[RMDB]
RNA sequence: GGGAACGACUCGAGUAGAGUCGAAAACUUAAACAAGAUCCUCGGGAGUCAGUCUUCCAGAUGCUUUUCCUAUGAUCAAGCCCCAAAAGCCACUGAUAACUCAUAGCAUAAUUUGAAAUAGCUGACAUCAGAAUACUAGGUUCGCCUAGUAUUCUGAAAAAGAAACAACAACAACAAC
Reactivity to DMS in 0.01 (KOAc 150mM, MgCl2 10mM, bicine 150mM(pH8.5), 24C), signal-to-noise 2, nucleotides 027 to 126: c060u000u000a040a040a170c080a130a050g000a080u000c010c030u000c100g010g000g000a080g020u000c090a050g000u000c080u010u010c010c030a070g000a050u000g000c060u010u000u000u000c060c060u000a060u010g010a040u010c060a080a150g000c030c010c010c120a030a070a110a130g020c040c030a060c030u000g030a080u000a080a100c090u010c040a030u010a040g000c050a050u010a050a080u000u000u000g000a080a070a060u000a140g000c040u010g010a060c080a140
Reactivity to 2A3 in 0.01 (KOAc 150mM, MgCl2 10mM, bicine 150mM(pH8.5), 24C), signal-to-noise 2, nucleotides 027 to 126: c020u060u050a070a120a080c080a050a060g050a150u030c020c040u040c060g030g040g010a070g030u000c060a040g010u050c070u060u020c010c000a030g030a110u080g020c000u150u030u070u030c010c000u060a120u060g030a020u060c050a050a030g010c000c020c010c000a050a130a020a020g010c010c010a040c050u040g010a020u040a150a050c000u030c040a010u070a010g000c000a020u040a110a090u220u050u120g100a100a120a040u070a030g000c030u040g010a020c020a080